An RNA of 177 nucleotides, treated with 2A3 and DMS and read out base by base. Values cover nucleotides 27 to 126. The reactions ran in a buffer of 150 mM KOAc, 10 mM MgCl2 and 150 mM bicine (pH 8.5), at 24 C. High DMS reactivity at an A or C suggests that its Watson-Crick edge is free.
RNA sequence: GGGAACGACUCGAGUAGAGUCGAAAAGAUGUGCGGGCAGCCCGGACGGCGUGGGUUGCGGACUUUCUGCGGGGCGGCCCAAAUGGCCCUUUAAACGUGUGUAUACGGACGCGCCGGGCCAGUCGGCGCGAAUGCUCCUCUUCGGAGGAGCAUUCGCAAAAGAAACAACAACAACAAC
Reactivity to 2A3 in 0.01 (KOAc 150mM, MgCl2 10mM, bicine 150mM(pH8.5), 24C), signal-to-noise 7, nucleotides 027 to 126: g120a110u190g050u080g090c050g010g020g000c010a020g000c010c020c030g040g050a070c060g060g050c060g030u090g020g040g010u030u050g050c030g050g010a020c020u060u080u030c050u120g040c050g020g020g030g000c030g000g010c010c010c030a030a070a030u050g010g000c010c000c000u050u140u120a100a100a010c040g010u070g000u020g030u090a050u100a300c090g070g030a000c010g000c000g010c030c020g010g000g000c010c010a010g050u030c040g040g010c050
Reactivity to DMS in 0.01 (KOAc 150mM, MgCl2 10mM, bicine 150mM(pH8.5), 24C), signal-to-noise 4, nucleotides 027 to 126: g010a120u020g020u020g010c130g020g000g000c000a170g000c030c010c020g000g010a100c090g000g000c040g050u000g000g000g030u010u020g000c050g000g000a070c060u010u010u010c060u020g030c100g020g000g000g000c020g000g000c020c020c040a030a090a100u040g000g010c010c000c010u010u010u010a060a100a150c090g000u000g000u010g000u020a090u060a070c110g010g000a080c020g000c030g000c040c120g010g010g010c030c000a050g010u000c040g000g030c120